[RMDB]
RNA sequence: GGGAACGACUCGAGUAGAGUCGAAAAGACGACAGGUUGGACUAAACCAUCUGCUUCCAUCUUGUCCAAAAUUUUUUGUCUAGAUUUAGCUUGUUUCACCAAGUUAGCAUAAGUACCAGCAGAUGCAGCAGUAGCUCCGGUUCGCCGGAGCUACUGCAAAAGAAACAACAACAACAAC
Reactivity to 2A3 in 0.01 (KOAc 150mM, MgCl2 10mM, bicine 150mM(pH8.5), 24C), signal-to-noise 1, nucleotides 027 to 126: g010a000c050g000a010c000a010g020g030u010u020g050g050a000c080u080a070a000a040c060c000a000u080c000u000g010c040u020u010c010c000a080u110c030u000u000g000u060c020c010a130a130a150a200u140u200u030u000u140u070g090u000c080u110a000g010a300u190u120u000a000g040c050u000u040g040u030u190u150c170a190c080c000a000a000g000u000u000a000g040c030a080u150a190a080g060u100a190c000c060a000g060c050a020g000a000u030g010c000a000